[RMDB]
RNA sequence: GGGAACGACUCGAGUAGAGUCGAAAAUAUUGGCCAAAUACUUAACCUUGAGUUGUGUAGAGAGAUUUUGUCACUUGGGUGUUUUUGCUUCACAUCUUCAUGGUCACACCUGAUGAAACUGCUAAGAGGAGACUUUAAGAUUCGUCUUAAAGUCUCCAAAAGAAACAACAACAACAAC
Reactivity to DMS in 0.01 (KOAc 150mM, MgCl2 10mM, bicine 150mM(pH8.5), 24C), signal-to-noise 3, nucleotides 027 to 126: u000a090u000u000g010g010c040c060a090a090a080u000a010c060u010u010a090a110c040c020u010u000g000a070g000u000u000g010u010g020u000a020g000a120g000a090g000a090u000u000u000u000g000u010c040a080c090u000u000g020g010g020u000g000u000u000u000u000u000g010c010u000u000c030a050c070a080u000c030u000u010c070a050u010g000g000u010c080a070c090a090c050c030u000g000a090u000g000a050a050a110c100u000g020c120u010a070a090g010a300
Reactivity to 2A3 in 0.01 (KOAc 150mM, MgCl2 10mM, bicine 150mM(pH8.5), 24C), signal-to-noise 1, nucleotides 027 to 126: u090a040u070u080g030g000c070c020a030a070a070u160a050c070u140u110a080a070c010c000u000u030g040a020g030u070u010g030u010g010u170a010g000a020g020a030g020a240u040u060u000u300g050u080c060a040c060u040u070g060g070g010u020g100u080u110u030u100u130g020c020u050u100c000a010c000a060u000c010u170u050c050a040u060g010g000u000c010a020c020a020c050c010u060g020a040u030g020a090a100a070c090u110g050c050u090a110a000g060a030

Source: RMDB library OK2TRN, as collected in RNAgym. The record gives the reactivity of an RNA of 177 nucleotides to DMS and 2A3. Values cover nucleotides 27 to 126. DMS adducts were read by reverse transcription with MarathonRT. The 2A3 profile rests on 817 reads.